Source: RMDB library OK1LIB, as collected in RNAgym. An RNA of 177 nucleotides, treated with 2A3 and DMS and read out base by base. The DMS profile rests on 79,797 reads. The reactions ran in a buffer of 150 mM KOAc, 10 mM MgCl2 and 150 mM bicine (pH 8.5), at 24 C.
[RMDB]
RNA sequence: GGGAACGACUCGAGUAGAGUCGAAAAUUAUUUGCAGCAGCCAGGACAGACUGAACCUCGAUUAUACGUCAGAAAUGGAAAAAGCGAUGCAGCUGUCACACGGAAUUGGAUACGAGGAAUAUGGACGCAGCUUACAUUCGUUCGCGGAUGUGAGCUGAAAAGAAACAACAACAACAAC
Reactivity to 2A3 in 0.01 (KOAc 150mM, MgCl2 10mM, bicine 150mM(pH8.5), 24C), signal-to-noise 9, nucleotides 027 to 126: u170u080a090u050u100u110g030c020a030g000c000a000g010c000c010a020g020g020a040c010a030g050a050c030u040g020a050a060c010c010u010c010g010a020u030u050a070u070a150c050g030u040c050a030g110a080a150a050u140g050g060a070a080a030a030a000g040c020g010a020u100g020c020a020g020c020u020g030u090c010a020c000a010c090g060g040a050a080u080u070g050g020a010u020a100c040g010a020g040g030a050a050u160a080u100g060g010a010c040g010
Reactivity to DMS in 0.01 (KOAc 150mM, MgCl2 10mM, bicine 150mM(pH8.5), 24C), signal-to-noise 9, nucleotides 027 to 126: u020u030a050u010u010u010g010c050a080g010c050a080g010c030c020a060g010g010a110c040a050g010a080c030u010g000a090a100c060c020u000c030g000a080u030u020a080u030a120c150g010u010c040a060g010a070a100a090u020g010g000a040a050a080a080a060g010c020g000a060u020g010c050a060g000c020u000g000u010c040a050c070a100c080g000g000a070a070u020u010g000g000a060u010a050c060g000a050g000g010a050a060u020a070u010g000g010a120c150g000